[RMDB]
Structure probing data (DMS and 2A3) for a 177-nucleotide construct.
It was measured as part of the RMDB library OK1LIB.
For 2A3, 10,920 sequencing reads were counted.
For DMS the reverse transcriptase was MarathonRT.
RNA sequence: GGGAACGACUCGAGUAGAGUCGAAAAGAGAAGUAAACUGUUAGUCGCCAGCGGCUUGACCCGCUGUGGCCGCGGCGGCCUAGUUGAGACUGAAACGGCGGGUUAGAGCUCGGAGAGACCGAGCAGAAGUACCUAUCAUGUUCGCAUGAUAGGUACUAAAAGAAACAACAACAACAAC
Reactivity to DMS in 0.01 (KOAc 150mM, MgCl2 10mM, bicine 150mM(pH8.5), 24C), signal-to-noise 5, nucleotides 027 to 126: g000a090g010a110a130g020u030a100a080a130c070u020g010u010u020a120g010u000c000g020c000c000a080g040c010g020g000c000u000u030g000a120c010c020c000g000c010u010g010u010g000g010c010c000g030c020g020g000c000g000g010c020c040u000a070g010u010u000g010a060g000a300c060u010g010a060a030a030c010g010g010c000g000g000g000u010u020a050g000a120g010c010u000c010g000g010a300g010a210g030a110c010c000g020a000g020c000a020g000a070
Reactivity to 2A3 in 0.01 (KOAc 150mM, MgCl2 10mM, bicine 150mM(pH8.5), 24C), signal-to-noise 7, nucleotides 027 to 126: g100a010g060a160a020g060u240a070a100a030c080u100g070u220u160a020g000u010c000g000c020c040a080g000c010g020g000c000u040u030g060a150c000c000c000g000c010u000g010u020g010g000c010c000g000c000g000g000c010g000g000c000c020u050a050g020u040u100g040a050g020a090c070u050g040a070a040a000c000g010g000c010g000g010g000u000u040a040g000a000g000c000u000c000g020g000a140g000a010g060a160c000c000g000a000g000c010a000g000a020